[RMDB]
Source information: Structure probing data (DMS and 2A3) for a 170-nucleotide construct. The reactions ran in a buffer of 150 mM KOAc, 10 mM MgCl2 and 150 mM bicine (pH 8.5), at 24 C.
RNA sequence: GGGAACGACUCGAGUAGAGUCGAAAAUUGUUGACCUUCCGGAGGUCCCUCUCGAGCUCCUCCUUUCUUCUUCUUGCAUCGAUCCACUUUCCGAGUUGCUCUUCUCUCCCCCUCCGGGGUCUCCUCGCAGCAUACUACUUCGGUAGUAUGAAAAGAAACAACAACAACAAC
Reactivity to DMS in 0.01 (KOAc 150mM, MgCl2 10mM, bicine 150mM(pH8.5), 24C), signal-to-noise 9, nucleotides 027 to 129: u040u020g000u000u000g000a090c050c020u020u030c050c040g040g000a070g020g030u020c010c010c010u040c020u000c050g040a110g000c080u030c030c040u030c010c010u010u020u030c030u020u020c040u020u010c030u030u020g030c060a070u000c030g040a130u010c030c010a070c070u000u010u000c040c030g030a070g030u010u000g000c010u000c030u000u030c040u010c020u000c010c000c010c000c020u000c040c040g030g010g020g020u000c000u000c000c020u000c060g030c120a090g000
Reactivity to 2A3 in 0.01 (KOAc 150mM, MgCl2 10mM, bicine 150mM(pH8.5), 24C), signal-to-noise 9, nucleotides 027 to 129: u080u050g040u030u040g030a040c010c000u110u110c060c040g020g010a010g020g020u050c020c000c010u080c010u030c040g040a010g010c020u020c000c000u020c010c020u060u070u030c030u050u010c000u060u010c010u030u070g040c020a060u030c020g070a060u030c020c020a060c030u050u070u030c030c010g020a020g050u020u040g030c020u010c000u090u010c030u000c000u020c010c000c000c000c010u010c000c000g000g000g000g010u010c010u010c000c000u010c010g040c020a030g040